This 207-nucleotide RNA was probed chemically with 2A3 and DMS. For 2A3, 4,290 sequencing reads were counted. It was measured as part of the RMDB library OK3TST.
RNA sequence: GGGAACGACUCGAGUAGAGUCGAAAAAAGAAACCCUUGAGCUGGGAGGUAGUGAGGGAAAGUGAUUGAUGGUUCGUUUGUGGGAGAGCAGUCUCAACUCAGGUGGUAACAACAGUUAAUUUUUUUUCAGCUGUGCUAUACUGACAUCCUCUUCACACUGAUGUAGAUGGUUCGCCAUCUACAUCAGAAAAGAAACAACAACAACAAC
Reactivity to 2A3 in 0.01 (KOAc 150mM, MgCl2 10mM, bicine 150mM(pH8.5), 24C), signal-to-noise 4, nucleotides 027 to 156: a000a000g120a040a060a020c000c010c000u010u060g050a040g000c030u020g010g020g010a030g010g020u100a040g020u040g050a050g000g020g000a050a080a050g050u050g040a110u050u090g030a060u070g020g020u030u060c070g020u030u070u100g050u040g010g020g010a020g000a000g010c030a010g060u030c020u020c080a030a060c030u020c020a020g050g030u030g020g020u050a070a030c040a010a010c010a010g040u050u070a120a190u080u040u030u020u010u010u060u120c040a030g000c010u010g000u020g020c030u060a040u030a210c020u020g020a010c000a070u050c010c010u030c000u080u070c020a030c010a010
Reactivity to DMS in 0.01 (KOAc 150mM, MgCl2 10mM, bicine 150mM(pH8.5), 24C), signal-to-noise 1, nucleotides 027 to 156: a060a090g020a130a110a120c020c000c000u020u010g000a120g010c020u000g000g000g000a070g020g000u000a050g010u000g000a080g030g020g030a030a050a080g010u010g020a100u010u040g000a100u000g020g010u000u010c070g020u000u000u010g020u000g010g010g020a120g010a080g030c080a090g030u020c040u000c060a020a090c040u000c020a040g030g010u000g000g010u000a030a050c050a040a040c030a020g020u000u010a010a030u000u000u000u000u000u000u000u000c030a000g000c020u000g020u010g000c000u010a050u000a050c030u010g000a040c030a060u000c020c010u000c020u000u000c040a050c070a110
The DMS profile rests on 4,784 reads.